This 207-nucleotide RNA was probed chemically with 2A3 and DMS. The RNA was probed in 150 mM KOAc, 10 mM MgCl2 and 150 mM bicine (pH 8.5) at 24 C.
RNA sequence: GGGAACGACUCGAGUAGAGUCGAAAAGGAAUCGACAGUAGAGUGUAUCAUGUCAGUUAGCAUGCCGGGGAAUGGUGGUUUACCCCGUUAUCAAAUGAUUACCGACCAAUAAUUGGCGAAACUCGUUAGGCCCGUCCACACUUCGGUGUGGACGGAAUGAUGCGAAGGAAUUCGUUCCUUCGCAUCAAAAAGAAACAACAACAACAAC
Reactivity to 2A3 in 0.01 (KOAc 150mM, MgCl2 10mM, bicine 150mM(pH8.5), 24C), signal-to-noise 3, nucleotides 027 to 156: g060g020a060a020u080c020g040a050c070a040g060u130a070g030a030g040u090g020u070a040u190c060a020u060g060u060c050a020g040u030u110a020g000c040a010u050g050c030c010g000g000g000g000a010a030u030g010g000u030g000g030u000u020u100a080c000c000c010c010g000u030u030a060u060c080a010a040a070u090g020a050u060u030a030c000c030g060a100c010c030a030a000u160a130a110u100u060g000g010c040g020a050a040a070c070u070c030g050u050u050a060g050g060c000c060c000g000u000c000c000a000c000a000c000u080u080c240g110g000u000g000u000g020g000a000c000g000g000a010a000
Reactivity to DMS in 0.01 (KOAc 150mM, MgCl2 10mM, bicine 150mM(pH8.5), 24C), signal-to-noise 1, nucleotides 027 to 156: g010g000a070a080u000c030g010a060c030a050g000u020a090g000a140g010u020g000u000a070u000c020a120u000g010u000c060a100g010u000u030a070g050c050a140u000g030c030c000g000g000g030g020a050a090u020g000g000u020g000g020u010u010u010a140c010c010c000c020g010u000u020a040u000c270a060a090a060u020g010a200u000u000a010c000c000g000a060c010c010a030a220u030a050a150u010u010g010g030c030g000a090a030a040c040u000c060g040u000u010a070g030g000c090c010c000g020u000c000c000a040c000a000c030u000u020c290g100g020u020g070u010g020g010a010c000g000g000a010a000

Record summary:
DMS adducts were read by reverse transcription with MarathonRT.